[RMDB]
RNA sequence: GGGAACGACUCGAGUAGAGUCGAAAAUUCAUUUUCUUUUCCUCCAGUGGCUGAACCCAUUUGUGUUGUUUCUCCAACUAGAGGAAUAUCUCCAUUUUUCAUAUUAAAAUCAAAAACAGUUUCUCCAUUUUGUCCAGAUAAUACACUUUGAAAGGCAACCGCUAAUGAUAUUCGUAUCAUUAGCGGUAAAAGAAACAACAACAACAAC
Reactivity to 2A3 in 0.01 (KOAc 150mM, MgCl2 10mM, bicine 150mM(pH8.5), 24C), signal-to-noise 1, nucleotides 027 to 156: u100u010c100a060u040u030u010u300c100u130u120u000u000c000c000u070c000c020a030g000u000g000g010c100u010g060a010a000c020c010c030a100u000u300u300g030u090g000u040u080g010u000u010u000c000u030c000c010a100a100c030u000a000g000a010g000g050a000a000u000a080u040c060u000c040c000a010u150u100u080u080u140c010a030u150a120u220u280a220a220a120a160u110c040a010a030a190a080a030c060a110g030u000u060u010c000u050c150c030a110u090u080u040u150g070u070c060c000a010g080a060u040a190a020u110a210c160a010c080u130u140u150g040a000a000a090g010g040c030a010